[RMDB]
Record summary
The record gives the reactivity of an RNA of 207 nucleotides to 2A3. It was measured as part of the RMDB library OK3TST. For 2A3, 807 sequencing reads were counted. The RNA was probed in 150 mM KOAc, 10 mM MgCl2 and 150 mM bicine (pH 8.5) at 24 C.

RNA sequence: GGGAACGACUCGAGUAGAGUCGAAAAGUUACAGGAGCUCAUCGAGGAACGGUUGUAAGAAACCAUGGUUUUUCAACAGAUUGCCACGUACGUAGUCGAGGCUCUCGGGCUCACGGGGUCGCUGAGAGCGGCGGCUCAUUUCUGGAUCUACGACACGCCUCAACUGUUAGUUCGCUAACAGUUGAGGAAAAGAAACAACAACAACAAC
Reactivity to 2A3 in 0.01 (KOAc 150mM, MgCl2 10mM, bicine 150mM(pH8.5), 24C), signal-to-noise 2, nucleotides 027 to 156: g040u040u100a030c040a030g010g080a060g010c070u040c070a100u100c120g040a060g060g020a080a060c030g000g000u010u030g080u070a130a150g030a160a020a010c030c020a010u060g050g000u000u050u000u030u120c040a140a120c050a090g060a090u090u140g020c010c020a010c070g060u160a010c100g050u030a000g020u000c010g000a000g050g050c000u000c000u000c000g020g000g000c020u040c090a130c070g090g000g070g000u030c060g000c210u170g000a000g010a000g000c160g080g000c000g010g000c020u000c030a050u050u060u030c020u000g050g010a030u000c020u080a010c000g100a050c060a000c120g020